The record gives the reactivity of an RNA of 177 nucleotides to DMS and 2A3. The RNA was probed in 150 mM KOAc, 10 mM MgCl2 and 150 mM bicine (pH 8.5) at 24 C. 2A3 adducts were read by reverse transcription with SuperScript II with manganese. For 2A3, 2,023 sequencing reads were counted. In probing experiments dimethyl sulfate is read out at A N1 and C N3, which are open when not base-paired. For DMS, 1,061 sequencing reads were counted. It was measured as part of the RMDB library TTRDEL. For DMS the reverse transcriptase was MarathonRT.
RNA sequence: GGGAACGACUCGAGUAGAGUCGAAAAGAUAUGGAUUUGAGCAACAGCUAUGGAUCGGAAACGAUCCGAUAGACAUGCUCUGUCCUAAGUCAAAAGAUUGUAAAAAGCUUCGGCUUUUUACAAUCAAGACAUCUUAAUGCUUCGGCAUUAAGAUGUCAAAAGAAACAACAACAACAAC
Reactivity to DMS in 0.01 (KOAc 150mM, MgCl2 10mM, bicine 150mM(pH8.5), 24C), signal-to-noise 2, nucleotides 027 to 126: g010a050u000a300u010g000g000a000u000u020u000g020a020g020c000a030a090c300a090g010c010u000a000u000g030g000a010u010c030g010g000a050a070a170c020g020a000u000c000c010g020a010u000a000g000a110c070a180u020g010c000u010c010u000g010u000c000c010u000a050a090g000u000c030a150a100a180a140g000a010u000u000g000u000a000a010a010a010a010g000c000u010u010c270g080g000c000u020u000u010u000u000a000c020a000a020u000c000a070a060
Reactivity to 2A3 in 0.01 (KOAc 150mM, MgCl2 10mM, bicine 150mM(pH8.5), 24C), signal-to-noise 1, nucleotides 027 to 126: g020a020u090a050u150g000g000a040u300u300u300g000a000g000c010a000a140c020a200g090c020u000a010u030g030g000a010u010c010g040g070a050a020a000c000g000a000u000c020c000g030a010u000a000g030a080c020a060u060g010c000u010c000u000g000u010c000c000u020a060a020g030u010c020a030a010a090a190g010a020u000u020g000u010a000a000a000a000a000g000c030u050u130c280g110g000c000u010u020u000u010u010a000c000a000a000u010c000a010a000